[RMDB]
RNA sequence: GGGAACGACUCGAGUAGAGUCGAAAACUUGAAUCCUAGCUUCAAUUGCCAAGUCACGUUGUUCUACCUUCGCUGGCGCUUGAUGGAGAAUGCGUGAAAAGCGUCGUCUCUCUGCCAUGUGCAUUUUUGACUCAAAAGGAUUCGUCCUUUUGAGUCAAAAAGAAACAACAACAACAAC
Reactivity to 2A3 in 0.01 (KOAc 150mM, MgCl2 10mM, bicine 150mM(pH8.5), 24C), signal-to-noise 1, nucleotides 027 to 126: c030u090u130g050a040a000u000c000c010u010a020g010c020u040u050c020a050a130u050u050g050c020c000a150a040g010u090c000a000c030g130u150u210g000u080u140c000u070a250c060c000u080u050c070g000c000u000g180g000c000g000c020u130u160g010a040u130g010g010a030g020a050a030u020g000c040g000u080g000a030a100a000a000g010c040g000u070c000g000u000c000u000c000u000c000u030g000c000c010a090u110g030u010g030c040a080u000u000u080u000

The record gives the reactivity of an RNA of 177 nucleotides to 2A3.
The RNA was probed in 150 mM KOAc, 10 mM MgCl2 and 150 mM bicine (pH 8.5) at 24 C.
The data come from the RNA Mapping Database (RMDB), library RFM100.